Conditions: 150 mM KOAc, 10 mM MgCl2 and 150 mM bicine (pH 8.5), 24 C. This 177-nucleotide RNA was probed chemically with DMS and 2A3.
[RMDB]
RNA sequence: GGGAACGACUCGAGUAGAGUCGAAAAUUAAAGAGCGUAGCACACACUCAGACUAAGUCUGACACACACAUACGCUAAUCAUCUCAGUGUGUGUUCGAGAUAUCGAUAAGUGUAUGAGAUGAAAAAACAUAAAUCUCUGAUUCGUCAGAGAUUUAUGAAAAGAAACAACAACAACAAC
Reactivity to DMS in 0.01 (KOAc 150mM, MgCl2 10mM, bicine 150mM(pH8.5), 24C), signal-to-noise 6, nucleotides 027 to 126: u010u010a070a110a120g020a170g010c000g010u000a020g010c060a030c030a050c090a070c260u000c000a010g000a030c030u010a110a170g030u000c000u010g000a020c020a010c010a010c010a010c000a050u000a020c010g010c010u000a070a110u000c010a010u000c000u000c070a060g000u000g010u000g010u000g000u000u000c020g000a030g000a160u010a080u000c010g000a020u010a060a110g010u000g010u000a050u000g000a030g000a020u000g000a000a050a080a060a090a140
Reactivity to 2A3 in 0.01 (KOAc 150mM, MgCl2 10mM, bicine 150mM(pH8.5), 24C), signal-to-noise 5, nucleotides 027 to 126: u200u100a110a070a030g190a020g020c000g000u010a000g000c020a010c000a000c010a000c020u000c000a010g020a010c030u200a290a050g030u000c000u010g020a000c000a000c000a000c000a000c000a030u020a030c010g010c070u070a090a090u010c000a000u000c000u000c010a010g010u000g000u000g000u010g010u020u000c000g020a010g030a110u180a080u160c010g010a010u010a130a050g000u000g000u010a020u030g010a000g000a010u040g000a110a010a010a000a010a000

It was measured as part of the RMDB library M2PK90. 2A3 adducts were read by reverse transcription with SuperScript II with manganese. Values cover nucleotides 27 to 126.